RNA sequence: GGGAACGACUCGAGUAGAGUCGAAAAAGGGAAAGUUCGAGGAGUUCGGCAUUUACCAAUAUUUAUAAAUGCCACUGGGGAUUUUCUAAGUGAACAAAGAUAUGGAUGUUUGGGAAAGCAUCCACUUAUCAGUGUAGAAGUUCGCUUCUACACUGAUAAAAGAAACAACAACAACAAC
Reactivity to 2A3 in 0.01 (KOAc 150mM, MgCl2 10mM, bicine 150mM(pH8.5), 24C), signal-to-noise 1, nucleotides 027 to 126: a010g090g010g000a070a000a000g000u100u020c000g080a070g020g040a060g130u080u120c060g000g020c000a010u020u000u030a090c050c040a120a060u160a120u280u150u020a070u010a010a010a000u030g000c000c000a020c000u030g050g030g050g030a020u040u000u000u040c020u080a260a050g050u070g170a050a010c020a060a220a000g080a070u050a060u200g000g000a010u000g010u030u030u010g200g000g000a010a020a020g010c000a000u000c000c000a000c000u000u000
This 177-nucleotide RNA was probed chemically with 2A3. The RNA was probed in 150 mM KOAc, 10 mM MgCl2 and 150 mM bicine (pH 8.5) at 24 C. For 2A3 the reverse transcriptase was SuperScript II with manganese. As a SHAPE reagent, 2A3 marks flexible, mostly unpaired nucleotides at the ribose 2'-OH. The 2A3 profile rests on 620 reads.